Notes: This 207-nucleotide RNA was probed chemically with 2A3 and DMS. For DMS, 1,476 sequencing reads were counted.
[RMDB]
RNA sequence: GGGAACGACUCGAGUAGAGUCGAAAAUACAGAACAACUUGAUGUUAUGUUUGAGCGCGUUGAGACGAUCUCCGCAUACGCAGUCACUGAUCGAAGUGAUCUUAAAUUAACUGGAAGCGAAGAGGAUCUUCGACAGUGGAUCCUCGAUCAGCCAGAGGUAGCUAAUUGACUUCGGUCAAUUAGCUACAAAAGAAACAACAACAACAAC
Reactivity to 2A3 in 0.01 (KOAc 150mM, MgCl2 10mM, bicine 150mM(pH8.5), 24C), signal-to-noise 3, nucleotides 027 to 156: u150a060c060a020g130a160a010c060a030a020c130u070u160g020a140u030g100u040u060a120u050g060u000u080u150g050a050g030c050g000c030g050u050u130g100a100g010a140c080g030a100u050c040u000c020c000g070c050a030u090a160c030g030c030a020g020u070c020a000c000u030g000a090u050c030g060a100a000g080u000g080a020u040c010u020u160a170a250a190u070u090a030a030c000u010g060g010a140a020g090c030g010a090a000g020a050g230g070a070u020c010u010u020c010g150a110c020a020g000u010g030g010a000u000c000c000u000c000g010a040u020c020a000g040c020c020a070g000a090g050
Reactivity to DMS in 0.01 (KOAc 150mM, MgCl2 10mM, bicine 150mM(pH8.5), 24C), signal-to-noise 1, nucleotides 027 to 156: u000a200c030a110g080a070a070c080a060a100c030u010u010g010a130u000g010u000u000a150u000g070u010u000u020g040a080g000c070g010c060g100u000u010g000a060g000a150c080g020a150u000c020u000c020c030g030c060a050u000a080c000g000c050a090g030u010c060a080c030u000g000a040u010c090g080a100a070g020u030g010a070u000c060u020u000a050a130a070u000u000a050a150c010u000g000g020a040a140g030c070g000a070a160g000a030g030g010a040u000c000u030u000c030g020a060c260a110g000u000g010g030a030u000c000c000u000c010g010a070u000c030a200g000c010c010a080g020a090g010